This 177-nucleotide RNA was probed chemically with DMS.

[RMDB]
RNA sequence: GGGAACGACUCGAGUAGAGUCGAAAAGCAUGCUUAAUACAUGCAAGUUGAACGAGAAUAGUAAAAGCUUGCUUUUACUAGGACAGUAGCGAACGGGUGAGUAAUACGUAAGAAUCUGCCCUUUGGAUCCUAAGAGGCGGUUCGCCGCCUCUUAGGAAAAAGAAACAACAACAACAAC
Reactivity to DMS in 0.01 (KOAc 150mM, MgCl2 10mM, bicine 150mM(pH8.5), 24C), signal-to-noise 1, nucleotides 027 to 126: g040c000a010u000g000c010u000u010a130a120u000a200c020a050u010g000c010a130a200g000u000u000g010a180a090c040g000a050g020a300a080u010a050g000u000a030a000a020a010g010c010u020u000g010c000u000u000u000u000a030c000u000a000g040g000a220c140a060g000u000a070g030c030g010a060a010c110g020g020g010u000g030a050g010u000a110a090u030a090c110g030u020a060a120g000a100a100u000c020u010g010c010c000c000u010u000u000g010g010a160
The reactions ran in a buffer of 150 mM KOAc, 10 mM MgCl2 and 150 mM bicine (pH 8.5), at 24 C. For DMS the reverse transcriptase was MarathonRT.